The record gives the reactivity of an RNA of 177 nucleotides to 2A3 and DMS. Conditions: 150 mM KOAc, 10 mM MgCl2 and 150 mM bicine (pH 8.5), 24 C. For 2A3 the reverse transcriptase was SuperScript II with manganese. The data come from the RNA Mapping Database (RMDB), library OK1LIB.
RNA sequence: GGGAACGACUCGAGUAGAGUCGAAAAGUCGGUUACUAUGCAUGUCUGUUUAUACAAUGUCUGUCUCAGUUUUUUUGGCUUAAUUGUUUUCGUUGGUCAUGCUGGUUGGGUGGCACUUGUAGGAGGCACGAUACGCGGUAUUCGUACCGCGUAUCGUAAAAGAAACAACAACAACAAC
Reactivity to 2A3 in 0.01 (KOAc 150mM, MgCl2 10mM, bicine 150mM(pH8.5), 24C), signal-to-noise 2, nucleotides 027 to 126: g090u030c010g000g060u050u000a050c030u030a070u080g000c000a050u030g020u000c030u030g080u010u100u140a060u000a040c090a090a110u050g090u040c000u000g080u040c030u050c060a150g030u000u000u000u000u000u070u130g040g000c030u060u110a120a080u190u070g090u010u080u070u000c090g030u090u110g000g040u020c040a010u070g000c000u000g060g000u080u010g040g000g010u080g000g040c010a010c040u060u110g000u020a010g050g030a050g000g010c010
Reactivity to DMS in 0.01 (KOAc 150mM, MgCl2 10mM, bicine 150mM(pH8.5), 24C), signal-to-noise 1, nucleotides 027 to 126: g020u000c000g000g000u010u030a030c070u030a070u030g000c010a010u000g010u010c030u020g000u000u020u000a070u000a080c110a070a010u000g000u000c050u020g000u030c010u000c110a020g000u000u000u000u040u000u020u040g000g040c000u000u000a050a080u010u030g000u020u010u010u010c040g050u000u000g010g000u000c040a030u020g000c070u020g000g000u000u020g030g000g000u020g000g020c010a020c070u000u000g040u000a020g030g000a180g010g000c090